[RMDB]
RNA sequence: GGGAACGACUCGAGUAGAGUCGAAAACGCUCACGUUACGAGAUGCACUUAUGAGUCUGUUAUGAACGGAACGAGACGUAGAAGAGCAGAAACGAGGCACAAUAGGUCAGCACCAUGCGGAUGAAUGAUCUAGUCAAGGGUUCGCCCUUGACUAGAUAAAAGAAACAACAACAACAAC
Reactivity to 2A3 in 0.01 (KOAc 150mM, MgCl2 10mM, bicine 150mM(pH8.5), 24C), signal-to-noise 4, nucleotides 027 to 126: c070g020c060u040c020a070c040g040u040u120a020c040g020a030g000a120u050g000c030a040c080u060u040a050u190g030a020g040u010c040u010g050u060u050a110u130g130a130a020c020g010g000a000a030c030g020a050g030a040c010g000u020a030g060a150a000g010a000g000c000a010g070a010a030a000c040g010a030g030g010c010a010c000a010a090u050a050g040g000u020c020a010g010c030a030c010c020a030u110g030c030g030g040a050u040g020a070a110u110g030
Reactivity to DMS in 0.01 (KOAc 150mM, MgCl2 10mM, bicine 150mM(pH8.5), 24C), signal-to-noise 4, nucleotides 027 to 126: c100g010c050u020c030a090c080g010u010u030a080c060g000a100g000a120u020g010c050a070c030u010u000a050u010g000a080g010u010c030u010g010u010u000a060u010g020a140a060c110g000g010a040a070c080g010a070g030a060c030g000u000a090g000a090a060g000a070g020c060a030g010a040a050a030c040g000a090g000g010c030a060c080a070a110u060a070g010g010u000c060a040g000c050a070c060c060a010u000g010c050g000g000a060u040g020a040a090u040g000
Description:
This 177-nucleotide RNA was probed chemically with 2A3 and DMS. 2A3 adducts were read by reverse transcription with SuperScript II with manganese. For DMS the reverse transcriptase was MarathonRT. The 2A3 profile rests on 4,184 reads. The reactions ran in a buffer of 150 mM KOAc, 10 mM MgCl2 and 150 mM bicine (pH 8.5), at 24 C.